[RMDB]
Structure probing data (2A3) for a 177-nucleotide construct. Values are in units of 0.01, from 0 to 300, in steps of 10. Conditions: 150 mM KOAc, 10 mM MgCl2 and 150 mM bicine (pH 8.5), 24 C. The data come from the RNA Mapping Database (RMDB), library RFM100. 2A3 adducts were read by reverse transcription with SuperScript II with manganese.

RNA sequence: GGGAACGACUCGAGUAGAGUCGAAAAAGCGACCUCUACGGAGGUCGCAAAGACACCCUUAUGGGGCAAUACUUGCUUCAGUGGGGCUUUGGUGCUCACUGAGUCUGCCCCCUAAGUGUGUCUCUAAACAGUCAUCCGGUUUCGACCGGAUGACUGUAAAAGAAACAACAACAACAAC
Reactivity to 2A3 in 0.01 (KOAc 150mM, MgCl2 10mM, bicine 150mM(pH8.5), 24C), signal-to-noise 1, nucleotides 027 to 126: a000g000c000g000a000c020c000u000c000u000a150c300g070g000a000g000g020u000c000g000c000a000a000a000g000a000c000a000c010c010c000u000u080a020u040g000g000g000g000c010a020a020u130a270c060u090u240g070c010u050u090c000a030g000u000g080g030g050g060c000u160u090u270g170g030u190g140c000u020c000a010c000u010g000a000g010u000c010u040g000c000c000c010c010c020u010a000a000g010u000g000u000g000u000c000u020c000u090a190a210